This 307-nucleotide RNA was probed chemically with 2A3 and DMS. For 2A3, 11,366 sequencing reads were counted. For DMS, 4,171 sequencing reads were counted. It was measured as part of the RMDB library POS240. The RNA was probed in 150 mM KOAc, 10 mM MgCl2 and 150 mM bicine (pH 8.5) at 24 C. DMS (dimethyl sulfate) methylates the pairing face of unpaired adenines and cytosines. 2A3 is a SHAPE reagent: it acylates the 2'-hydroxyl of flexible nucleotides of all four kinds.
[RMDB]
RNA sequence: GGGAACGACUCGAGUAGAGUCGAAAACCUUCACUACGGUGAAGGACUAGCGGCUUCGGCCGCUAGAGCGAUACUUCGGUAUCGCAGGAUCACUACGGUGAUCCAAGUCGCGACGUGAGUCGCGACAAGCGCUACGGUGACGUAGCGCAAGAACGGCUUCGGCCGUUCACGGACGACUUCGGUCGUCCGAACGCUUAACGUGAGUUAAGCGAAGUUUGUUAGUGGCGUGUCCGUCCGCAGCUGGCAAGCGAAUGUAAAGACUGACUAGUACGGCAUUCGUGCCGUACAAAAGAAACAACAACAACAAC
Reactivity to 2A3 in 0.01 (KOAc 150mM, MgCl2 10mM, bicine 150mM(pH8.5), 24C), signal-to-noise 5, nucleotides 027 to 266: c000c000u000u000c000a000c010u060a020c220g120g000u000g000a000a000g000g000a020c000u000a000g000c000g020g000c010u070u070c300g170g000c000c000g000c000u000a000g000a020g000c000g000a010u010a010c020u040u070c240g130g000u010a000u000c000g000c010a000g000g010a000u000c010a000c010u040a030c280g120g000u000g000a000u000c000c000a000a040g000u000c000g010c000g000a000c020g090u130g110a070g010u010c000g000c000g000a000c000a010a030g000c000g000c000u000a000c010g010g060u080g050a030c000g000u000a000g000c000g000c000a000a000g000a000a000c000g000g010c010u080u130c210g160g000c010c000g000u000u000c010a010c010g010g000a000c000g000a010c000u060u110c300g120g000u000c000g010u000c000c000g000a040a020c010g000c000u000u000a010a010c000g050u060g130a090g010u060u000a010a000g000c000g000a170a030g010u010u020u010g010u000u020a020g010u020g110g000c000g010u010g010u000c010c000g000u000c000c000g000c000a000g000c000u000g010g000c000a000a000g020c080g160a140a070u250g110u230a010a010a010g000a000c010u010g000a000c000u010a010
Reactivity to DMS in 0.01 (KOAc 150mM, MgCl2 10mM, bicine 150mM(pH8.5), 24C), signal-to-noise 1, nucleotides 027 to 266: c010c000u000u010c000a010c000u000a090c140g040g000u000g000a020a010g030g010a210c010u010a010g010c010g010g030c000u000u000c180g020g000c000c000g000c000u000a000g000a160g000c000g000a010u000a000c010u000u030c190g020g020u010a000u000c010g020c020a050g000g000a010u000c010a000c010u000a070c210g040g010u000g000a010u000c000c010a060a060g000u000c020g040c000g000a020c020g000u020g010a270g050u010c010g010c020g000a000c000a060a070g010c000g010c000u000a000c010g000g000u000g000a140c000g000u000a010g010c000g040c010a020a040g000a000a010c000g000g000c010u000u040c230g030g000c000c010g000u010u010c010a130c040g000g010a020c010g010a010c000u010u030c160g000g000u010c000g000u020c000c000g010a040a090c010g010c000u000u000a000a000c000g000u010g000a160g010u000u000a000a000g000c000g040a060a070g010u000u010u000g010u000u000a010g010u020g010g020c000g020u000g000u000c000c040g000u010c000c000g020c020a160g010c040u000g000g020c020a000a010g010c000g000a110a060u030g020u030a010a020a050g010a010c010u000g000a010c010u010a180